[RMDB]
RNA sequence: GGGAACGACUCGAGUAGAGUCGAAAAGCAUCUUGCUUCGGCAAGAUGCAAAUAACGGUCAGUGCUUGCAGCUAGUCGUAAAUGCUAACUGGCCUUACGCUUAAACGAAUGCGUUCGCGCAUUCGAACCAGUCCACACUGUUCGCAGUGUGGACUGGAAAAGAAACAACAACAACAAC
Reactivity to 2A3 in 0.01 (KOAc 150mM, MgCl2 10mM, bicine 150mM(pH8.5), 24C), signal-to-noise 2, nucleotides 027 to 126: g020c000a010u020c000u000u010g030c010u010u070c200g080g000c000a010a010g010a000u000g010c000a010a000a000u020a010a010c010g000g010u000c000a010g020u020g110c080u170u150g010c000a030g030c010u160a040g120u090c070g110u130a020a140a080u110g000c050u040a100a030c000u010g000g020c030c000u000u030a040c060g000c000u070u200a080a110a070c030g000a030a020u000g000c000g000u020u040c260g000c000g000c060a000u000u000c000g000a010a020
Reactivity to DMS in 0.01 (KOAc 150mM, MgCl2 10mM, bicine 150mM(pH8.5), 24C), signal-to-noise 1, nucleotides 027 to 126: g000c000a010u000c000u000u000g010c020u000u000c230g030g030c000a000a000g000a040u000g020c000a010a060a050u020a110a050c280g030g010u000c000a020g000u000g000c300u070u000g010c020a000g030c130u000a020g020u030c200g010u000a120a000a270u000g020c000u000a060a000c000u000g000g020c030c030u000u010a030c160g020c160u000u000a050a140a100c070g000a000a000u000g000c050g000u000u020c180g000c010g040c000a020u000u000c000g020a100a200